[RMDB]
This 177-nucleotide RNA was probed chemically with 2A3 and DMS.
RNA sequence: GGGAACGACUCGAGUAGAGUCGAAAAUUUAAGAGCGUAGAUGUCUCAGUCACGAUACGAGUAAGUGACUCUCGUGUACUACUGACGAAUGAGACAGAGACAUUUAUGCUCAGUGUCAGUCAAGGAACGAAAUACACGGGUUCGCCCGUGUAUUUCGAAAAGAAACAACAACAACAAC
Reactivity to 2A3 in 0.01 (KOAc 150mM, MgCl2 10mM, bicine 150mM(pH8.5), 24C), signal-to-noise 2, nucleotides 027 to 126: u160u120u070a200a060g010a000g020c020g020u010a000g000a040u000g020u000c000u010c050a010g000u000c000a000c090g040a030u080a090c030g000a020g040u070a170a060g020u070g160a010c010u000c000u040c040g060u060g040u050a080c060u000a010c030u090g160a060c020g080a080a110u180g000a050g000a100c030a030g010a000g010a000c000a000u030u000u000a010u010g000c000u010c000a000g000u040g040u030c040a040g000u020c060a060a070g100g020a130a040
Reactivity to DMS in 0.01 (KOAc 150mM, MgCl2 10mM, bicine 150mM(pH8.5), 24C), signal-to-noise 2, nucleotides 027 to 126: u010u010u010a080a100g010a000g020c010g050u000a010g020a000u000g010u000c000u000c000a100g010u000c000a090c080g010a090u010a050c030g010a040g010u020a060a150g000u010g020a110c130u010c100u030c130g010u020g030u020a020c110u000a020c100u000g010a130c050g010a110a040u000g030a120g000a060c110a030g010a000g000a000c010a010u000u000u000a000u010g000c010u010c000a010g000u020g000u000c070a050g010u000c080a050a130g000g020a090a130

The reactions ran in a buffer of 150 mM KOAc, 10 mM MgCl2 and 150 mM bicine (pH 8.5), at 24 C. DMS (dimethyl sulfate) methylates the pairing face of unpaired adenines and cytosines. For DMS the reverse transcriptase was MarathonRT.